[RMDB]
RNA sequence: GGGAACGACUCGAGUAGAGUCGAAAAUGAACAGCGGCCGCUCCCUGCGCAUGCCGCCUGGACGCAAGCACAUCGUGGACCGCGUAACUCUCGCGUCAGACCUCAUAGACGAGGCCAUGCGUCUGUAUAUCGAAGGAUCUUUCGAGAUCCUUCGAUAAAAAGAAACAACAACAACAAC
Reactivity to 2A3 in 0.01 (KOAc 150mM, MgCl2 10mM, bicine 150mM(pH8.5), 24C), signal-to-noise 1, nucleotides 027 to 126: u070g020a040a090c050a020g000c000g030g020c000c000g060c020u070c010c000c010u020g020c040g000c020a080u100g020c000c000g000c000c010u040g060g010a010c000g000c040a010a030g110c020a040c050a140u120c090g110u110g000g060a040c090c050g000c030g020u050a080a140c080u070c040u020c190g020c010g070u060c030a010g070a150c000c000u070c030a090u080a150g110a080c070g010a000g000g000c000c010a040u040g000c000g000u000c010u030g090u010a270
Reactivity to DMS in 0.01 (KOAc 150mM, MgCl2 10mM, bicine 150mM(pH8.5), 24C), signal-to-noise 2, nucleotides 027 to 126: u000g010a090a140c070a160g030c020g000g000c010c100g000c060u000c000c010c010u000g010c060g000c200a110u000g000c050c020g030c010c190u000g010g000a010c020g010c000a060a080g010c050a090c140a120u000c130g020u000g000g010a090c120c050g060c050g030u020a070a130c220u010c100u000c000g000c010g010u010c060a070g020a050c020c040u010c030a080u010a240g020a100c140g000a020g000g000c020c020a100u000g010c000g010u000c000u020g010u020a120
Chemical mapping of a 177-nucleotide RNA with 2A3 and DMS. Reactivities are given for positions 27 through 126. The reactions ran in a buffer of 150 mM KOAc, 10 mM MgCl2 and 150 mM bicine (pH 8.5), at 24 C. DMS adducts were read by reverse transcription with MarathonRT. The 2A3 profile rests on 1,199 reads. The DMS profile rests on 1,461 reads. It was measured as part of the RMDB library OK2TRN.